[RMDB]
RNA sequence: GGGAACGACUCGAGUAGAGUCGAAAAGAUAUGGACACUCCUCGAAGAACGGUUAACGGAAGUCGGAAACGACUUCCCAAACCGGGAGAGGUGUGUCCUAAGUCAAACCAUCCGUUCGCGGAUGGAAGUGUACUAGUGUGUUCGCACACUAGUACACAAAAGAAACAACAACAACAAC
Reactivity to 2A3 in 0.01 (KOAc 150mM, MgCl2 10mM, bicine 150mM(pH8.5), 24C), signal-to-noise 2, nucleotides 027 to 126: g010a000u090a030u150g010g000a010c000a000c010u050c020c000u020c030g190a300a050g020a060a010c000g020g000u050u070a070a020c040g010g010a000a000g000u000c000g010g000a070a060a050c010g010a010c000u000u000c000c010c000a000a050a000c000c000g000g000g000a030g000a010g000g000u010g000u010g000u010c000c000u000a010a010g010u010c020a010a040a130c000c000a000u000c020c010g030u060u080c300g010c010g220g000a010u010g000g010a040a120
Reactivity to DMS in 0.01 (KOAc 150mM, MgCl2 10mM, bicine 150mM(pH8.5), 24C), signal-to-noise 3, nucleotides 027 to 126: g030a130u000a300u000g000g000a020c010a000c000u010c010c000u000c000g020a160a170g010a190a190c000g000g000u010u000a120a230c300g000g020a000a010g020u000c000g000g010a120a120a170c020g010a010c000u000u000c000c000c100a040a030a010c000c000g000g000g000a120g030a000g000g000u010g030u010g010u000c000c000u000a000a090g030u000c050a210a120a290c000c000a000u000c000c000g020u000u010c300g040c010g000g020a030u000g000g010a020a030